[RMDB]
RNA sequence: GGGAACGACUCGAGUAGAGUCGAAAACAACAAGUAUGGAUUCAUGCAUCCUGUUAGCCCCAUCACUAUUCUUGGCAUUCCAUUUUGCUGGACCAAAUGGAAAAUGAGGCUGGCUGGCUAAAGGGUACUGACCUGAUACUGGCUGGCUAAACAUACAGACGAUAAUGAGUUUCGACUCAUUAUCGUCAAAAGAAACAACAACAACAAC
Reactivity to 2A3 in 0.01 (KOAc 150mM, MgCl2 10mM, bicine 150mM(pH8.5), 24C), signal-to-noise 4, nucleotides 027 to 156: c040a010a000c010a020a060g050u070a090u070g040g080a120u160u090c050a050u210g090c020a030u060c010c040u060g070u080u090a080g040c000c000c010c030a040u090c030a040c070u170a150u170u090c070u070u060g040g000c020a040u040u000c020c000a020u020u060u020u100g080c100u120g010g040a090c020c020a020a010a010u020g010g000a020a040a080a080u070g010a030g060g000c000u000g000g010c000u000g020g000c010u060a050a000a060g030g020g020u090a110c100u130g180a120c000c000u010g000a020u040a150c020u000g020g000c000u010g000g000c020u040a040a030a010c020a000u220a060c080a050
Reactivity to DMS in 0.01 (KOAc 150mM, MgCl2 10mM, bicine 150mM(pH8.5), 24C), signal-to-noise 2, nucleotides 027 to 156: c020a050a090c010a050a050g020u020a020u000g010g080a120u000u000c040a080u000g010c040a070u000c010c040u000g030u010u000a120g000c030c000c020c060a150u000c030a180c060u000a070u000u010c050u000u000g050g070c060a150u000u000c020c000a090u010u000u010u000g020c070u000g010g000a230c040c030a020a060a040u020g010g000a100a070a130a060u000g020a240g010g000c000u000g040g000c020u000g050g060c020u000a090a180a200g000g000g030u000a070c190u000g000a060c020c000u020g000a160u010a070c030u010g020g010c000u000g020g000c020u000a000a080a090c050a100u000a100c100a240